[RMDB]
RNA sequence: GGGAACGACUCGAGUAGAGUCGAAAAAGACUGAUUAACGAAUUAAAUUCAGCUUGAUAUUAAAGGAUUUAAUCUGAUUUCAGUUCAAUAAUGCCACAGUAGAGGACGUAGAUUAAUACGUCCUCAAGAAUAUGUGAUUUUUCGAAAUCACAUAUUCAAAAGAAACAACAACAACAAC
Reactivity to 2A3 in 0.01 (KOAc 150mM, MgCl2 10mM, bicine 150mM(pH8.5), 24C), signal-to-noise 8, nucleotides 027 to 126: a000g010a000c000u000g000a010u030u030a080a010c020g020a030a060u010u000a000a000a000u010u000c010a030g080c060u110u130g110a060u120a100u210u280a120a080a040g000g000a000u000u000u010a000a010u000c020u030g080a110u000u010u030c000a000g010u040u010c040a030a040u150a100a050u120g100c020c010a160c030a050g160u200a030g010a000g000g000a000c000g000u000a000g010a120u040u160a140a060u020a010c000g010u010c000c000u000c000a000a000
Reactivity to DMS in 0.01 (KOAc 150mM, MgCl2 10mM, bicine 150mM(pH8.5), 24C), signal-to-noise 6, nucleotides 027 to 126: a100g000a010c000u000g010a000u000u010a050a210c160g000a030a040u000u000a000a000a010u000u000c020a110g020c190u030u020g020a150u040a100u030u030a070a100a100g010g010a000u000u000u000a000a000u000c000u000g000a280u010u000u000c010a010g000u010u010c060a040a080u020a040a080u020g000c000c010a080c240a090g010u040a100g010a000g010g010a010c000g020u000a020g000a190u030u030a080a080u010a000c000g000u000c000c000u000c000a010a030

Record summary: An RNA of 177 nucleotides, treated with 2A3 and DMS and read out base by base. The data come from the RNA Mapping Database (RMDB), library OK1LIB. For 2A3, 19,038 sequencing reads were counted.